[RMDB]
RNA sequence: GGGAACGACUCGAGUAGAGUCGAAAACAGUCACGGAAUUUCUGGGCCAGACAUGGCUAAAUAACAAGAUAUAGAAGUAGACAUAUAUUUUCUACAUUUUCAAGUUACAAUCUGGUGUACUAAAUCAGCUGUCCCGGAUAUUCGUAUCCGGGACAGCAAAAGAAACAACAACAACAAC
Reactivity to 2A3 in 0.01 (KOAc 150mM, MgCl2 10mM, bicine 150mM(pH8.5), 24C), signal-to-noise 1, nucleotides 027 to 126: c000a000g050u010c040a000c110g010g010a040a130u020u300u000c000u180g000g050g000c050c000a120g000a040c140a300u000g000g020c000u120a040a040a040u160a010a010c080a080a090g010a000u070a000u090a210g100a130a000g030u080a000g140a000c090a000u080a000u050a130u140u070u040u050c030u000a010c000a010u300u260u060u040c000a030a000g070u080u000a000c000a050a040u020c010u030g000g040u030g000u050a160c080u050a000a000a130u000c080a070

Chemical mapping of a 177-nucleotide RNA with 2A3. The 2A3 profile rests on 413 reads. It was measured as part of the RMDB library OK1LIB. 2A3 adducts were read by reverse transcription with SuperScript II with manganese. The RNA was probed in 150 mM KOAc, 10 mM MgCl2 and 150 mM bicine (pH 8.5) at 24 C.